[RMDB]
RNA sequence: GGGAACGACUCGAGUAGAGUCGAAAAAGGUGCUGGAAGAAGUGAAUGCAAUCACACAGACCAGCUCCACAGGUUUUCACCAUGACAGCAAAUGGCUCAAGCAGGAACCUAGCAAAACUGUCUUCUGAAAGGCUCCACCCAACAGCUGGCUGAAACAGACGCAUUAAAAUUUCGAUUUUAAUGCGUCAAAAGAAACAACAACAACAAC
Reactivity to DMS in 0.01 (KOAc 150mM, MgCl2 10mM, bicine 150mM(pH8.5), 24C), signal-to-noise 2, nucleotides 027 to 156: a090g030g030u010g000c000u020g020g030a130a110g000a270a280g020u010g000a010a150u010g060c300a190a260u010c010a080c030a080c070a150g030a150c000c020a060g020c010u010c030c060a150c050a130g000g010u000u000u000u000c030a050c000c030a030u000g050a070c040a040g000c110a070a100a110u000g040g010c040u020c070a080a120g030c000a070g020g000a040a080c050c010u010a110g030c040a070a060a050a090c010u000g010u000c050u010u010c000u000g000a020a080a050g000g010c010u010c050c050a110c030c000c020a090a070c070a120g000c040u000g040g010c020u000g000a110a080a060c090a180
Reactivity to 2A3 in 0.01 (KOAc 150mM, MgCl2 10mM, bicine 150mM(pH8.5), 24C), signal-to-noise 3, nucleotides 027 to 156: a000g000g000u030g000c000u020g020g040a090a080g040a170a020g120u010g020a040a050u240g070c070a090a140u040c010a030c000a000c030a020g090a090c010c000a000g000c000u020c010c010a060c020a020g040g030u030u030u060u110c030a060c020c010a030u100g030a040c040a020g000c030a040a140a160u100g050g000c020u040c080a080a070g020c010a030g040g100a050a030c020c020u040a030g010c050a030a040a070a210c030u030g040u030c000u090u000c060u110g050a130a080a040g030g000c010u010c020c000a030c020c020c010a020a060c010a070g050c020u020g040g000c000u150g010a070a020a000c010a030